[RMDB]
RNA sequence: GGGAACGACUCGAGUAGAGUCGAAAAAUCGACCUCUGGUCCGCUGUGUUCGCCCUCGCCGGGUGGCCGCGUCGGUGCGGACCCCGAUCGCCUGUCUAGCGGCGGUGGUCGUGAUAGCCGGCUGCACCGGCCAUUACGCGUUCGCGCGUAAUGGCCGAAAAGAAACAACAACAACAAC
Reactivity to 2A3 in 0.01 (KOAc 150mM, MgCl2 10mM, bicine 150mM(pH8.5), 24C), signal-to-noise 2, nucleotides 027 to 126: a010u060c040g010a020c010c020u070c030u060g040g020u010c000c000g050c000u090g010u000g050u140u100c060g080c010c000c000u010c070g100c000c030g010g000g090u100g030g030c050c000g040c020g010u090c150g010g050u110g020c010g010g030a050c000c000c000c030g040a040u030c030g010c000c010u090g070u150c050u140a080g020c050g070g000c000g000g000u020g000g000u010c000g000u020g030a010u050a020g040c020c000g030g010c010u090g000c060a070c000